[RMDB]
RNA sequence: GGGAACGACUCGAGUAGAGUCGAAAAUACAUCCGCCCACAGGGGACUGUGGGCGGAUCAUCAGGACGAGGCUUCCCCGGCUUCGACCUGGUCGUGCCUCGCGCACACAACCGGAGCCCACGGGCUCGUGUUUAUGGUUGUUCGCAACCAUAAACACAAAAGAAACAACAACAACAAC
Reactivity to DMS in 0.01 (KOAc 150mM, MgCl2 10mM, bicine 150mM(pH8.5), 24C), signal-to-noise 1, nucleotides 027 to 126: u110a060c260a000u000c000c010g070c000c000c030a000c000a000g000g000g070g020a130c020u000g060u000g020g000g090c010g000g040a000u000c040a040u000c000a010g000g000a090c010g000a020g010g000c000u020u040c000c000c010c170g000g000c020u000u000c000g040a080c040c010u000g000g000u010c300g000u000g040c020c020u030c200g010c100g030c080a000c020a090c200a170a110c090c050g080g000a000g000c000c000c040a140c300g000g060g090c060u040c030
Reactivity to 2A3 in 0.01 (KOAc 150mM, MgCl2 10mM, bicine 150mM(pH8.5), 24C), signal-to-noise 4, nucleotides 027 to 126: u140a020c060a030u000c000c000g000c000c000c000a010c010a000g080g040g070g100a070c010u000g000u000g000g000g000c000g000g000a000u000c000a020u000c000a010g020g000a020c000g000a000g010g000c000u060u070c020c000c000c000g000g000c000u020u010c010g020a050c000c000u010g010g040u080c110g010u010g000c020c000u200c190g040c070g000c050a020c010a010c010a040a090c050c080g090g000a010g020c010c010c000a100c210g020g020g000c020u040c070

An RNA of 177 nucleotides, treated with DMS and 2A3 and read out base by base. It was measured as part of the RMDB library RFM100.